[RMDB]
RNA sequence: GGGAACGACUCGAGUAGAGUCGAAAACAUGUUUGCUCUGAUUGCCAUACCAUUCACCAGGAAUCUGCCUUACCUGGGAUUAAUCCCUUUUUUUAUGUGGGGUGCUUGCGGAUGGGCUAUAGUGACAUAUAAUAUAGCCUUUCGAGGCUAUAUUAUAAAAAGAAACAACAACAACAAC
Reactivity to 2A3 in 0.01 (KOAc 150mM, MgCl2 10mM, bicine 150mM(pH8.5), 24C), signal-to-noise 2, nucleotides 027 to 126: c050a040u070g020u110u090u090g010c010u010c040u080g060a100u040u070g010c000c010a050u030a130c010c010a040u040u070c060a040c110c010a000g050g000a060a050u060c080u170g040c000c010u000u080a070c000c010u010g010g010g010a010u070u180a030a040u080c010c000c000u120u150u080u090u000u070u140a120u170g070u080g080g000g020g000u020g070c010u090u120g040c070g000g040a040u010g050g020g000c010u050a010u010a040g090u070g040a030c000a030
Reactivity to DMS in 0.01 (KOAc 150mM, MgCl2 10mM, bicine 150mM(pH8.5), 24C), signal-to-noise 6, nucleotides 027 to 126: c090a090u010g010u010u000u010g010c040u010c050u010g010a140u010u000g010c010c030a080u010a100c060c030a050u000u000c040a160c040c020a020g000g000a110a100u010c090u000g010c050c040u000u010a180c030c060u000g000g010g010a070u000u000a090a110u010c000c000c000u000u000u000u000u010u010u000a060u030g000u000g010g000g010g010u000g010c100u000u000g020c080g010g000a060u000g000g010g010c060u010a080u000a090g000u000g000a060c080a120